[RMDB]
This 177-nucleotide RNA was probed chemically with DMS and 2A3. Reactivities are given for positions 27 through 126. The reactions ran in a buffer of 150 mM KOAc, 10 mM MgCl2 and 150 mM bicine (pH 8.5), at 24 C. 2A3 adducts were read by reverse transcription with SuperScript II with manganese.
RNA sequence: GGGAACGACUCGAGUAGAGUCGAAAAUGACGCCAGCACGUCUCUUGCAAAAUCGUAGAUUUAACCAUGCGAUGGUGGCAUUUCUUGAAUGUCUGCGACAACUCUUAGAGUUUGGAAAAAAGCAUGGGUGACUGGAGCUAUUCGUAGCUCCAGUCACAAAAGAAACAACAACAACAAC
Reactivity to DMS in 0.01 (KOAc 150mM, MgCl2 10mM, bicine 150mM(pH8.5), 24C), signal-to-noise 1, nucleotides 027 to 126: u040g000a130c120g020c020c000a060g000c070a050c050g010u000c180u060c050u000u000g000c030a220a140a040a060u020c090g000u000a060g000a000u020u000u000a100a300c000c030a000u000g000c030g000a000u000g000g000u060g000g000c030a020u000u000u010c250u020u000g000a080a090u000g000u000c000u020g030c020g000a110c030a010a000c010u000c020u000u090a060g000a000g000u000u020u010g000g000a000a020a020a170a180a200g000c010a020u000g000g000
Reactivity to 2A3 in 0.01 (KOAc 150mM, MgCl2 10mM, bicine 150mM(pH8.5), 24C), signal-to-noise 3, nucleotides 027 to 126: u130g030a010c080g000c050c010a000g020c000a010c040g080u060c030u030c010u060u100g040c010a100a000a000a040u080c060g060u020a050g020a090u100u160u120a070a060c040c020a000u000g000c040g100a090u060g120g000u050g010g000c030a050u010u000u050c070u230u260g120a110a050u010g020u040c020u060g000c000g030a060c030a000a000c000u040c010u190u300a060g010a000g000u010u180u140g080g030a200a020a020a000a050a000g010c000a020u010g000g090